[RMDB]
RNA sequence: GGGAACGACUCGAGUAGAGUCGAAAAAGUUUCCAAUUCGUUGGAAACUACUGUGGGAAUGCGGAAUAUAAAAUCCUCCGCUUAAGGAUUUUACCGACUUAAAGUACACUAGUUUCGACUAGUGUAACAUCAUAUAUAGGUUCGCCUAUAUAUGAUGAAAAGAAACAACAACAACAAC
Reactivity to DMS in 0.01 (KOAc 150mM, MgCl2 10mM, bicine 150mM(pH8.5), 24C), signal-to-noise 9, nucleotides 027 to 126: a130g010u000u000u000c000c000a010a020u000u010c160g010u000u000g000g000a010a000a000c000u000a040c080u000g020u010g010g010g010a140a080u010g010c000g010g000a160a070u010a180u000a020a020a040a030u000c070c010u000c190c180g010c180u010u010a080a030g000g000a040u000u000u000u000a060c060c030g010a080c110u000u010a060a050a170g010u000a010c000a010c000u000a000g000u000u000u010c180g010a030c000u000a000g010u000g000u000a010a100
Reactivity to 2A3 in 0.01 (KOAc 150mM, MgCl2 10mM, bicine 150mM(pH8.5), 24C), signal-to-noise 8, nucleotides 027 to 126: a000g010u010u010u000c010c000a000a010u070u070c170g040u030u010g000g010a010a010a000c010u040a050c040u120g090u180g090g040g090a100a070u140g040c010g000g090a110a030u200a020u040a140a080a020a020u030c000c020u020c030c040g090c060u040u070a040a020g010g000a010u020u010u030u130a050c020c020g060a060c120u080u150a130a060a050g090u020a020c000a000c000u010a000g010u030u060u070c170g060a010c000u000a010g000u000g000u000a000a000
Overview: This 177-nucleotide RNA was probed chemically with DMS and 2A3. For 2A3, 16,262 sequencing reads were counted. For DMS, 17,936 sequencing reads were counted. 2A3 adducts were read by reverse transcription with SuperScript II with manganese. For DMS the reverse transcriptase was MarathonRT. The RNA was probed in 150 mM KOAc, 10 mM MgCl2 and 150 mM bicine (pH 8.5) at 24 C.